Background:
Chemical mapping of a 177-nucleotide RNA with DMS and 2A3. The DMS profile rests on 1,979 reads. Source: RMDB library M2PK90, as collected in RNAgym.

[RMDB]
RNA sequence: GGGAACGACUCGAGUAGAGUCGAAAAAUAAACAUGGUUACCAUAAACUAACCGUGAAGGUAGCCAUGAACACGGUUAGUUAAAUAAAAGCUGACCGUUAGGAAAAACCUAAUGCUCAGCAAAAAAACGAUAAAUUGUAGUUCGCUACAAUUUAUCGAAAAGAAACAACAACAACAAC
Reactivity to DMS in 0.01 (KOAc 150mM, MgCl2 10mM, bicine 150mM(pH8.5), 24C), signal-to-noise 2, nucleotides 027 to 126: a110u000a040a050a240c060a000u000g010g000u000u000a060c000c000a120u000a130a050a030c030u000a070a050c070c090g010u000g000a110a050g000g000u010a030g020c080c100a020u000g000a080a090c160a010c010g010g000u010u000a000g010u000u000a030a050a090u020a070a030a120a120g000c000u000g000a000c100c000g030u000u000a010g000g000a060a100a090a130a120c010c000u010a010a020u000g010c300u000c000a000g000c010a000a010a030a050a060a020a060
Reactivity to 2A3 in 0.01 (KOAc 150mM, MgCl2 10mM, bicine 150mM(pH8.5), 24C), signal-to-noise 1, nucleotides 027 to 126: a000u190a000a100a010c030a030u020g010g020u040u020a020c010c010a040u120a070a110a040c020u020a050a000c020c010g020u020g100a070a030g080g020u030a000g030c020c000a010u020g000a010a000c040a010c000g010g010u000u040a020g000u010u030a100a120a040u150a040a090a120a040g000c000u010g000a010c000c020g020u000u000a000g010g040a140a190a140a070a120c010c000u000a000a020u020g010c000u000c000a000g000c000a150a060a060a000a000a040a020